[RMDB]
RNA sequence: GGGAACGACUCGAGUAGAGUCGAAAACGACAGUGGUUUCCAUUGGAGACUCAACUGCUUGAAUGGAAGCACGCGUCCGCUGCGUGGUGGUGACUUCGGCAUCGUUGCUGCCCGUCCUGACAAGGGCAAGACCACGUUCCUCACCAGCGAACUGUCCGUAGCAAGAUGGAUUCGUCCAUCUUGCUACAAAAGAAACAACAACAACAAC
Reactivity to 2A3 in 0.01 (KOAc 150mM, MgCl2 10mM, bicine 150mM(pH8.5), 24C), signal-to-noise 4, nucleotides 027 to 156: c050g050a000c020a040g020u070g040g020u040u000u020c010c020a000u020u030g100g020a050g040a120c070u110c300a110a130c170u220g040c020u030u070g190a000a000u000g000g020a000a000g010c060a040c060g030c050g040u020c040c000g000c030u050g000c090g060u010g020g070u030g020g000u070g050a070c030u100u050c170g050g030c050a050u100c130g100u130u120g000c040u010g000c010c020c010g020u090c010c070u170g110a100c090a120a180g000g010g000c050a040a010g030a020c020c020a000c040g000u060u050c010c000u000c030a010c000c000a000g000c000g010a060a020c020u040g010u070c010c020
Reactivity to DMS in 0.01 (KOAc 150mM, MgCl2 10mM, bicine 150mM(pH8.5), 24C), signal-to-noise 1, nucleotides 027 to 156: c030g020a050c030a050g040u000g020g030u000u010u000c000c000a130u010u010g030g010a070g030a060c020u010c040a070a070c020u000g000c020u000u000g000a050a050u000g010g000a090a070g000c030a070c060g030c110g000u010c040c030g020c020u000g040c170g060u010g030g020u000g010g130u000g010a050c020u030u000c080g000g070c000a090u000c090g000u000u000g030c090u000g000c030c010c010g020u010c030c000u000g020a130c110a040a060g000g010g000c010a020a040g030a050c030c030a050c070g000u010u000c010c000u030c000a060c010c010a050g000c040g040a040a070c010u000g020u000c040c090